Source information
Chemical mapping of a 177-nucleotide RNA with DMS and 2A3. Reactivities are rounded to 0.1 and cut off at 0 and 3.
[RMDB]
RNA sequence: GGGAACGACUCGAGUAGAGUCGAAAAGUGAUGAGACAUCUCAUUCGCGGAUUCAGGUCCCAGCCUGCGAACUGUAGUUACCAAUUGUUCUUUGAGUCUACCUGGUUGAUUGGUGUGCUUCCGGAGAUAUCCAAAGAUAGUUCGCUAUCUUUGGAUAAAAAGAAACAACAACAACAAC
Reactivity to DMS in 0.01 (KOAc 150mM, MgCl2 10mM, bicine 150mM(pH8.5), 24C), signal-to-noise 9, nucleotides 027 to 126: g020u010g010a050u000g000a060g010a220c280a180u010c020u000c010a080u000u000c040g030c030g000g000a190u000u010c110a080g000g000u000c020c020c020a110g000c060c020u000g010c070g000a030a070c100u000g010u000a060g010u000u010a070c050c050a060a080u000u010g010u000u000c040u000u000u010g000a080g010u000c030u000a180c030c020u000g010g010u000u000g000a110u000u000g000g010u000g020u000g000c030u000u000c010c020g010g010a110g010a170
Reactivity to 2A3 in 0.01 (KOAc 150mM, MgCl2 10mM, bicine 150mM(pH8.5), 24C), signal-to-noise 2, nucleotides 027 to 126: g020u030g010a030u000g000a010g020a040c060a200u100c030u010c020a050u240u130c050g010c040g040g030a060u100u100c070a050g020g100u040c000c010c010a010g000c000c010u020g000c030g050a100a040c040u050g000u080a030g060u080u140a060c020c010a070a090u040u100g070u070u100c000u080u060u100g050a030g030u000c010u030a050c040c020u070g060g000u110u080g070a190u070u120g000g030u080g060u090g060c030u080u000c020c010g010g000a040g000a060